[RMDB]
RNA sequence: GGGAACGACUCGAGUAGAGUCGAAAAUUGGUAUAUGAUACCAUAUGACAAAGAAGAUUUAAUUGAAUAUGCAAUAAAAAGAGAUAUAGAGGAGGAAGGAGAAUGGUAGGUAUGGUGGUUACAUUUUUAAUUGUUUUAGGUAUUAUAUUGCUAAGUGAAGCGCGAUAAAUUUCGAUUUAUCGCGCUUAAAAGAAACAACAACAACAAC
Reactivity to 2A3 in 0.01 (KOAc 150mM, MgCl2 10mM, bicine 150mM(pH8.5), 24C), signal-to-noise 2, nucleotides 027 to 156: u100u040g000g050u080a010u010a010u060g020a020u010a000c000c000a020u000a010u060g020a030c070a020a110a020g130a090a020g020a070u040u300u200a100a040u080u080g010a040a030u150a060u200g010c080a000a030u040a140a120a010a000a040g090a010g050a000u060a020u040a200g040a020g000g000a010g020g000a060a000g000g000a010g020a060a000u090g030g000u040a030g000g070u020a020u070g070g030u010g000g000u010u000a000c000a020u010u000u080u070u130a150a070u050u000g040u020u080u000u120a010g000g000u000a010u020u060a020u020a000u050u100g000c040u040a000a000g080u200g170
The record gives the reactivity of an RNA of 207 nucleotides to 2A3. For 2A3 the reverse transcriptase was SuperScript II with manganese. High 2A3 reactivity points to a flexible backbone, as in loops and unpaired stretches. Source: RMDB library OK3TST, as collected in RNAgym. Reactivities are rounded to 0.1 and cut off at 0 and 3. For 2A3, 653 sequencing reads were counted.